[RMDB]
RNA sequence: GGGAACGACUCGAGUAGAGUCGAAAACAUUUGACAUGAUUGUGAUUUUUGUCCUUUAUUCUAUUACUGUGGCGUAUUACAUUGAUUGAUUUUUGUACAUGGAACCAUCCUUGCAUUCCAGGAGUAACUACUAGCCAUGUUUCGACAUGGCUAGUAGAAAAGAAACAACAACAACAAC
Reactivity to DMS in 0.01 (KOAc 150mM, MgCl2 10mM, bicine 150mM(pH8.5), 24C), signal-to-noise 3, nucleotides 027 to 126: c060a070u000u010u020g010a140c120a080u000g010a150u000u000g010u000g020a040u000u000u000u000u010g010u000c020c030u000u010u000a080u040u000c140u000a040u000u000a040c060u000g020u010g010g030c080g000u000a040u000u000a030c040a080u000u000g000a100u000u000g010a070u000u010u000u000u000g010u000a060c110a080u000g000g020a060a050c150c050a010u000c030c040u000u000g010c070a160u000u000c040c030a070g010g010a110g030u020a090a130
Reactivity to 2A3 in 0.01 (KOAc 150mM, MgCl2 10mM, bicine 150mM(pH8.5), 24C), signal-to-noise 2, nucleotides 027 to 126: c010a030u040u010u220g090a030c040a030u080g040a070u020u070g010u010g020a050u020u030u050u110u130g070u070c000c010u110u080u010a080u230u080c080u070a140u180u030a040c030u020g050u120g060g000c020g020u040a050u080u010a020c030a050u020u090g030a050u050u050g030a100u050u070u040u110u070g070u040a060c030a050u050g000g010a010a010c030c000a010u050c030c000u020u030g000c020a040u070u060c010c010a020g010g040a050g030u080a070a040